[RMDB]
RNA sequence: GGGAACGACUCGAGUAGAGUCGAAAAAUGGUGACCUUCGGGUCACCAUGGUGCGUAGCUGCGUUAAUUUAAUAGGUACGCUUAAUAAAUUUAAUUAACGCAAUGGAGCCUGCUUCGGCAGGCUCAAAUGGUGCUAUAUUUUCGAAUAUAGCACCAUAAAAGAAACAACAACAACAAC
Reactivity to DMS in 0.01 (KOAc 150mM, MgCl2 10mM, bicine 150mM(pH8.5), 24C), signal-to-noise 2, nucleotides 027 to 126: a010u000g000g000u000g000a020c000c000u000u010c230g020g020g000u000c000a010c000c000a000u000g010g010u010g010c070g020u000a070g020c190u000g010c000g010u000u000a000a020u000u000u000a080a080u020a070g010g000u010a030c100g000c060u000u000a060a080u000a070a090a100u010u010u010a030a040u010u000a000a000c010g010c010a110a130u010g010g000a020g020c010c000u000g000c010u000u010c210g030g000c010a010g000g010c000u000c000a010a060
Reactivity to 2A3 in 0.01 (KOAc 150mM, MgCl2 10mM, bicine 150mM(pH8.5), 24C), signal-to-noise 2, nucleotides 027 to 126: a010u020g030g010u000g020a000c010c020u020u030c300g070g000g000u020c000a000c000c000a000u000g020g030u120g030c040g050u070a050g090c090u060g000c010g000u010u020a030a000u050u020u030a170a130u080a050g080g050u070a020c070g030c080u050u110a140a080u150a150a230a040u110u120u040a050a060u000u000a010a000c010g000c000a040a060u090g060g010a000g000c010c010u010g000c000u050u030c150g070g020c020a000g030g000c000u010c000a000a000